[RMDB]
RNA sequence: GGGAACGACUCGAGUAGAGUCGAAAAGAUAUGGACCGUGAACUACGACGGCGGAAGCCUUUGAUCCGUAAACUCGGAAACGAGUUUACGGGGAGGCUUCCCGCUCGUGGUCGCACGGUCCUAAGUCGAUCCAUGUUAUCUUCGGAUAACAUGGAUCAAAAGAAACAACAACAACAAC
Reactivity to DMS in 0.01 (KOAc 150mM, MgCl2 10mM, bicine 150mM(pH8.5), 24C), signal-to-noise 1, nucleotides 027 to 126: g010a090u000a300u000g000g000a030c000c000g040u000g000a300a030c030u000a080c020g040a070c110g000g000c170g020g000a000a000g000c000c010u010u000u020g000a030u000c000c000g000u000a000a010a000c000u000c010g000g000a080a150a200c010g010a040g000u000u000u000a000c000g000g000g000g000a010g000g000c000u000u000c030c000c000g000c200u000c010g030u010g000g000u000c190g050c000a020c000g000g000u000c000c000u000a000a060g000u020c090
Reactivity to 2A3 in 0.01 (KOAc 150mM, MgCl2 10mM, bicine 150mM(pH8.5), 24C), signal-to-noise 2, nucleotides 027 to 126: g080a060u130a070u230g000g000a000c000c000g020u010g020a010a030c010u050a010c030g060a010c120g140g110c090g040g040a000a000g010c000c010u300u300u060g020a010u030c010c000g000u000a000a000a000c000u000c010g020g060a050a000a090c000g000a010g000u000u000u000a000c000g020g020g010g000a000g000g040c020u010u000c010c000c030g010c040u040c000g030u010g010g050u050c120g020c060a000c000g000g020u010c000c000u000a000a010g040u020c040
This 177-nucleotide RNA was probed chemically with DMS and 2A3. For DMS the reverse transcriptase was MarathonRT. 2A3 adducts were read by reverse transcription with SuperScript II with manganese. For 2A3, 4,411 sequencing reads were counted.